The record gives the reactivity of an RNA of 177 nucleotides to DMS and 2A3.
RNA sequence: GGGAACGACUCGAGUAGAGUCGAAAAGAUAUGGAGGUAUUUGAGCAUCGAUCAAGAACGUUUGGUGGUAUCGGAAACGAUACGUAACAUCCAAACGUUCUUGGGAGCUCAUGUACCUCCUAAGUCAGUGAAAACUAAUGUUCGCAUUAGUUUUCACAAAAGAAACAACAACAACAAC
Reactivity to DMS in 0.01 (KOAc 150mM, MgCl2 10mM, bicine 150mM(pH8.5), 24C), signal-to-noise 3, nucleotides 027 to 126: g000a050u000a300u000g000g010a030g010g020u000a000u000u000u000g010a010g020c010a300u000c220g000a090u000c000a010a010g000a010a000c000g020u010u000u000g000g010u010g010g010u010a000u000c000g010g010a120a100a140c010g000a010u000a010c000g000u000a010a040c230a030u010c000c000a010a010a010c000g010u000u000c000u000u000g010g000g010a040g020c000u000c000a000u000g010u010a010c000c010u000c000c000u010a000a070g000u000c050a150
Reactivity to 2A3 in 0.01 (KOAc 150mM, MgCl2 10mM, bicine 150mM(pH8.5), 24C), signal-to-noise 3, nucleotides 027 to 126: g060a030u110a040u180g000g000a010g000g000u000a040u010u020u030g010a000g000c060a300u300c050g130a100u120c070a000a000g000a010a000c000g000u000u000u010g010g000u010g010g010u010a000u010c010g020g020a040a050a060c020g010a000u000a000c010g000u010a010a030c040a300u130c010c010a010a000a000c000g000u000u010c000u000u010g000g000g000a000g010c010u000c010a000u000g000u000a000c010c010u000c000c000u000a000a000g030u020c040a010
Notes
The DMS profile rests on 5,366 reads. For DMS the reverse transcriptase was MarathonRT. The RNA was probed in 150 mM KOAc, 10 mM MgCl2 and 150 mM bicine (pH 8.5) at 24 C. Reactivities are given for positions 27 through 126.